[RMDB]
RNA sequence: GGGAACGACUCGAGUAGAGUCGAAAAGGCUUGCCUCUUGGGGUUGUAGGACUCCGAUAUGGUAGUCCAGUGAGAUAGUCGAAGGACCUGGAAAGGUCUGCUAGAAAGGGUAAAAGCCCCGUAGACAACGAUGGAAUGAAUUCGUUCAUUCCAUCGUAAAAGAAACAACAACAACAAC
Reactivity to DMS in 0.01 (KOAc 150mM, MgCl2 10mM, bicine 150mM(pH8.5), 24C), signal-to-noise 5, nucleotides 027 to 126: g000g010c050u000u000g050c020c010u000c130u010u000g010g010g000g010u000u000g010u000a130g030g010a020c000u000c010c000g010a120u000a060u010g020g020u010a010g010u000c000c020a140g010u000g000a110g030a110u000a090g010u000c010g000a040a090g000g010a010c000c000u000g000g030a290a070a000g010g000u000c000u010g020c030u000a240g010a030a010a250g000g000g000u000a030a020a280a070g010c010c000c010c010g000u000a300g000a020c040a120
Reactivity to 2A3 in 0.01 (KOAc 150mM, MgCl2 10mM, bicine 150mM(pH8.5), 24C), signal-to-noise 1, nucleotides 027 to 126: g000g000c040u050u090g040c020c010u050c050u010u040g000g000g030g000u070u060g190u250a110g170g080a010c000u030c000c010g080a130u100a110u300g050g020u040a010g020u050c000c040a000g050u040g110a110g050a080u160a130g000u020c000g000a040a000g020g000a000c000c020u000g000g040a030a000a000g000g030u020c000u010g000c010u000a010g030a040a010a010g020g000g020u060a000a000a010a000g000c000c000c000c000g010u000a000g000a010c000a040

The data come from the RNA Mapping Database (RMDB), library OK2TRN. This 177-nucleotide RNA was probed chemically with DMS and 2A3. For 2A3 the reverse transcriptase was SuperScript II with manganese. High DMS reactivity at an A or C suggests that its Watson-Crick edge is free.